[RMDB]
Conditions: 150 mM KOAc, 10 mM MgCl2 and 150 mM bicine (pH 8.5), 24 C. This 207-nucleotide RNA was probed chemically with DMS and 2A3. DMS adducts were read by reverse transcription with MarathonRT. The data come from the RNA Mapping Database (RMDB), library OK3TST.
RNA sequence: GGGAACGACUCGAGUAGAGUCGAAAACAUUCAACAGAUGCAAGCUAGGCCCUAUUCUUGCUGCUAAGGAUGGUGCAGCUAAGAUGAGUUCUAAGAUUCCUUCCAGUGCCAGAAUUCUUUGUUAUUACUUCAGUGAUUGAAGGGGAAGAGGCAAGUCACAACCCGUCAUAUUCGUAUGACGGGUUGUAAAAGAAACAACAACAACAAC
Reactivity to DMS in 0.01 (KOAc 150mM, MgCl2 10mM, bicine 150mM(pH8.5), 24C), signal-to-noise 2, nucleotides 027 to 156: c060a060u010u000c020a140a100c160a160g020a030u010g000c040a070a140g000c050u000a120g030g020c030c020c010u000a130u000u010c020u010u000g000c000u000g040c020u000a090a050g030g000a100u000g000g010u000g020c010a020g000c000u010a020a060g020a070u000g020a110g020u000u000c040u010a110a070g010a140u000u000c020c010u000u010c000c020a150g010u000g000c000c050a170g000a060a110u020u010c050u000u010u000g010u000u010a130u010u010a080c010u010u010c010a060g000u010g000a180u000u010g030a060a060g000g010g010g020a040a030g010a060g030g020c040a060a110g000u000c100
Reactivity to 2A3 in 0.01 (KOAc 150mM, MgCl2 10mM, bicine 150mM(pH8.5), 24C), signal-to-noise 3, nucleotides 027 to 156: c010a040u120u150c050a040a040c010a160g080a060u060g060c060a060a030g020c020u050a030g040g010c000c000c000u030a010u030u000c030u040u020g010c020u030g050c000u070a050a050g070g090a090u050g010g030u030g000c020a000g010c050u150a050a010g010a020u090g030a040g040u060u020c030u130a160a030g030a220u020u070c000c000u020u010c020c060a050g040u040g060c000c010a020g030a070a110u100u050c010u060u060u050g140u120u110a150u130u050a090c010u010u010c010a050g030u110g210a130u210u070g050a100a010g000g030g010g040a090a000g040a020g010g010c060a090a040g090u130c020